RNA sequence: GGGAACGACUCGAGUAGAGUCGAAAAGGCACUGCGAGAUGUGCGUAGACAAGGCGAGACCUUGUUUCUUUUCUUUACCCACUUUCGUGCUCUUGAAGCAGAAUGGGUUUUGAAUGGAAUUAAGGCCAGUGGCCGGGAGAUUCGUCUCCCGGCCACUAAAAGAAACAACAACAACAAC
Reactivity to DMS in 0.01 (KOAc 150mM, MgCl2 10mM, bicine 150mM(pH8.5), 24C), signal-to-noise 1, nucleotides 027 to 126: g000g000c000a000c000u000g010c290g000a240g000a130u000g000u000g010c060g030u010a060g000a040c080a080a030g040g030c100g080a190g000a170c030c010u000u000g000u030u020u030c000u000u060u000u000c010u000u000u000a020c010c000c000a000c300u000u000u040c080g010u010g020c000u000c040u090u080g040a130a010g000c000a240g000a000a100u000g000g010g040u000u000u000u000g000a040a000u000g000g010a030a030u020u000a040a080g000g060c070c120
Reactivity to 2A3 in 0.01 (KOAc 150mM, MgCl2 10mM, bicine 150mM(pH8.5), 24C), signal-to-noise 2, nucleotides 027 to 126: g070g070c000a000c040u080g020c080g180a040g090a100u240g060u040g050c000g010u070a050g030a120c060a100a020g030g020c040g110a090g000a130c000c000u030u000g000u020u000u000c000u030u030u000u000c010u000u000u010a020c010c050c000a030c100u060u090u020c180g170u090g000c000u000c000u210u300g160a210a000g000c000a000g020a000a010u000g000g000g000u000u000u030u000g000a030a020u030g030g010a000a000u080u020a150a080g020g040c010c000